Conditions: 150 mM KOAc, 10 mM MgCl2 and 150 mM bicine (pH 8.5), 24 C.
This 177-nucleotide RNA was probed chemically with 2A3 and DMS.
RNA sequence: GGGAACGACUCGAGUAGAGUCGAAAAUGAAGCGGGGGUAAGACCCCGUGGAGGGCCGAACGCACGUCGGUUGAAAACGGCGGCGAUGACCUGCGGGUAGGGGUGAAAGGCCUAUCAAACCCGGAGAUCGAUAAGUAUGAUUCGUCAUACUUAUCGAAAAAGAAACAACAACAACAAC
Reactivity to 2A3 in 0.01 (KOAc 150mM, MgCl2 10mM, bicine 150mM(pH8.5), 24C), signal-to-noise 8, nucleotides 027 to 126: u150g010a020a010g010c000g000g000g010g000g010u030a040a020g100a190c000c000c000c000g000u000g000g020a030g010g030g000c010c020g050a120a020c010g010c070a150c120g000u010c000g010g050u040u170g090a060a070a020a010c000g000g000c000g000g000c000g000a010u080g060a030c010c020u060g050c060g020g040g020u090a090g010g040g010g000u040g050a110a080a030g070g000c010c010u020a070u050c040a040a070a060c010c000c000g020g040a090g000a080
Reactivity to DMS in 0.01 (KOAc 150mM, MgCl2 10mM, bicine 150mM(pH8.5), 24C), signal-to-noise 9, nucleotides 027 to 126: u020g010a260a220g000c010g010g000g000g000g000u010a150a160g010a260c010c000c000c000g020u000g000g020a160g010g000g000c020c010g010a120a150c010g000c010a110c000g020u000c000g010g010u010u020g010a090a060a140a110c020g000g000c010g000g000c010g000a130u020g000a050c030c010u000g010c080g010g000g010u010a130g000g000g000g010u010g000a080a090a180g000g000c010c010u000a060u010c060a050a090a150c010c000c010g000g010a150g000a160
It was measured as part of the RMDB libraries RFM100 and RFMREP.